The record gives the reactivity of an RNA of 177 nucleotides to DMS. Conditions: 150 mM KOAc, 10 mM MgCl2 and 150 mM bicine (pH 8.5), 24 C. Reactivities are rounded to 0.1 and cut off at 0 and 3.
[RMDB]
RNA sequence: GGGAACGACUCGAGUAGAGUCGAAAAGAUAUGGACCACAUUGCGAGAACGGGUCGGAAACGACCCGGUUCGAUGAGCAAGUGGUCCUAAGUCAAAAUCCAAGAUUGCGUUCGCGCAAUCUUGGAAACUAUGGUUAAGGCUUCGGCCUUAACCAUAGAAAAGAAACAACAACAACAAC
Reactivity to DMS in 0.01 (KOAc 150mM, MgCl2 10mM, bicine 150mM(pH8.5), 24C), signal-to-noise 2, nucleotides 027 to 126: g000a040u000a030u010g000g000a010c000c010a010c010a170u000u010g000c020g000a100g020a040a080c020g000g000g050u000c000g000g010a000a010a020c010g000a010c000c000c000g000g010u020u000c010g010a100u010g010a300g010c020a020a010g000u000g000g000u000c000c000u000a000a070g000u000c020a080a120a140a230u000c000c000a010a020g000a030u000u000g010c010g010u000u010c260g020c010g030c010a010a000u000c000u000u000g000g010a000a020a080